The record gives the reactivity of an RNA of 207 nucleotides to 2A3. The 2A3 profile rests on 565 reads. The RNA was probed in 150 mM KOAc, 10 mM MgCl2 and 150 mM bicine (pH 8.5) at 24 C.
[RMDB]
RNA sequence: GGGAACGACUCGAGUAGAGUCGAAAAGGAACUGACUGGAAGCAUGAGCCUAGACAGAGAGUUAAACACCGAGUUACUUUUGUCAUCAUGGAUGAAGUGCAUCUACAAGCCCAAGGAAGGGGCUUCAAUAGUGCAAGAAGGUUUAGAAGCGCUAAAAAUCUGGAGCUGAAUUCGUUCAGCUCCAGAUAAAAGAAACAACAACAACAAC
Reactivity to 2A3 in 0.01 (KOAc 150mM, MgCl2 10mM, bicine 150mM(pH8.5), 24C), signal-to-noise 1, nucleotides 027 to 156: g040g010a040a040c060u060g080a050c030u020g090g000a000a020g010c030a060u030g030a050g040c030c040u060a040g020a030c030a050g170a000g000a000g030u130u230a160a110a020c130a050c050c070g050a040g150u080u070a020c010u000u020u030u100g050u020c000a020u010c000a020u120g150g000a050u000g020a100a000g030u010g020c000a020u020c000u050a050c030a080a020g000c010c010c010a010a010g000g000a000a060g000g060g000g010c000u030u000c020a040a050u030a000g010u010g010c000a000a040g050a010a000g070g040u090u040u000a010g040a120a030g000c000g000c030u050a130a000a000a130